Chemical mapping of a 177-nucleotide RNA with 2A3 and DMS. The 2A3 profile rests on 4,063 reads. The reactions ran in a buffer of 150 mM KOAc, 10 mM MgCl2 and 150 mM bicine (pH 8.5), at 24 C. 2A3 adducts were read by reverse transcription with SuperScript II with manganese.
[RMDB]
RNA sequence: GGGAACGACUCGAGUAGAGUCGAAAAAGCGUCGACGAACCUUCCAACCUUCCAAAGCAGCAAAAGCUGAACCUUCCAACCUUCCAAUCAACUCGAGAGGAGGAGGAGGAGGAGGAGGAGGAAUUAACAACCUUAACUCAUUCGUGAGUUAAGGUUGAAAAGAAACAACAACAACAAC
Reactivity to 2A3 in 0.01 (KOAc 150mM, MgCl2 10mM, bicine 150mM(pH8.5), 24C), signal-to-noise 3, nucleotides 027 to 126: a000g070c040g040u020c020g050a110c050g030a090a100c010c000u010u000c000c050a160a120c020c000u050u000c010c020a090a080a070g010c020a010g000c010a110a100a250a000g020c020u030g020a100a080c000c010u040u010c010c020a060a080c040c020u080u040c020c010a010a070u060c030a060a080c040u080c140g070a070g000a030g090g040a040g010g000a030g020g030a020g000g030a020g030g040a030g030g020a020g020g040a020g040g030a030a010u150u140a060a040
Reactivity to DMS in 0.01 (KOAc 150mM, MgCl2 10mM, bicine 150mM(pH8.5), 24C), signal-to-noise 3, nucleotides 027 to 126: a050g030c080g030u010c050g020a110c060g020a070a140c050c020u010u000c010c010a050a140c030c030u000u010c030c050a070a100a130g040c050a030g000c090a100a060a060a130g000c000u000g010a070a130c050c010u000u010c020c020a110a120c030c010u000u020c020c010a080a120u010c030a060a100c160u010c120g000a040g020a270g020g000a090g010g010a130g000g030a170g060g000a160g010g010a080g000g010a090g000g000a180g000g000a290a110u000u010a040a130